Conditions: 150 mM KOAc, 10 mM MgCl2 and 150 mM bicine (pH 8.5), 24 C. The record gives the reactivity of an RNA of 177 nucleotides to 2A3 and DMS. For DMS, 655 sequencing reads were counted.
[RMDB]
RNA sequence: GGGAACGACUCGAGUAGAGUCGAAAAGUAAAGGCGAGUGAGAAGAUCACAGAAUGCCAAAAGCACGCUUAGAAACGGACAUCUCUGAGCAAAAGUGCACGCAAUAAGCGAAAGAUGCCGAUAAAAAACGUGGUUACAUGUUCGCAUGUAACCACGUAAAAGAAACAACAACAACAAC
Reactivity to 2A3 in 0.01 (KOAc 150mM, MgCl2 10mM, bicine 150mM(pH8.5), 24C), signal-to-noise 1, nucleotides 027 to 126: g020u010a070a080a000g020g060c050g000a020g010u040g030a030g000a200a070g140a030u020c010a000c000a030g120a080a050u240g000c000c000a110a000a020a000g040c010a000c030g000c000u030u000a000g090a060a120a020c050g020g060a000c000a040u010c000u000c010u090g040a020g010c000a010a000a140a050g040u050g040c010a000c040g000c000a000a270u170a300a010g000c040g000a140a020a020g000a000u040g000c030c010g090a100u230a010a050a010a000a000
Reactivity to DMS in 0.01 (KOAc 150mM, MgCl2 10mM, bicine 150mM(pH8.5), 24C), signal-to-noise 1, nucleotides 027 to 126: g030u020a060a220a050g000g000c000g010a080g010u000g000a010g000a100a010g000a110u000c000a010c000a090g030a180a070u030g010c000c060a040a080a170a190g020c000a070c020g000c000u000u000a020g010a040a100a160c040g010g000a050c000a000u000c040u000c020u000g000a130g000c040a010a050a050a180g000u000g000c100a140c140g000c010a060a020u000a040a130g020c000g010a060a030a140g010a050u010g000c050c010g010a130u020a050a030a080a040a070

Values cover nucleotides 27 to 126. For 2A3, 920 sequencing reads were counted.